[RMDB]
RNA sequence: GGGAACGACUCGAGUAGAGUCGAAAAGAUAUGGAGCUCAUCUCUAGCGUGACGCGAGGAUCUACAGCGUAGUAUGGUCGGAAACGACCAUACGAGGCUGUAGGGAGCGUUCGGGUGAGCUCCUAAGUCAAAAGGACUUAUGUUCGCAUAAGUCCAAUCCUCGAGUUAAGUUCGCUUAACUCGAGGAAAAAGAAACAACAACAACAAC
Reactivity to 2A3 in 0.01 (KOAc 150mM, MgCl2 10mM, bicine 150mM(pH8.5), 24C), signal-to-noise 1, nucleotides 027 to 156: g010a010u010a000u030g000g010a010g000c020u000c020a010u020c080u040c080u180a090g080c090g300u300g060a020c010g050c000g040a270g030g010a000u000c000u000a000c010a000g000c000g000u000a010g000u000a020u000g000g000u020c000g010g000a000a000a010c010g000a000c010c000a000u000a010c010g000a000g010g000c000u000g000u000a000g000g000g000a000g000c000g000u040u040c050g030g010g010u000g000a020g000c000u000c000c010u000a000a000g010u000c000a000a000a010a120g000g010a000c000u000u010a000u030g050u060u100c300g000c100a000u000a000a000g000u000c020c000a000a030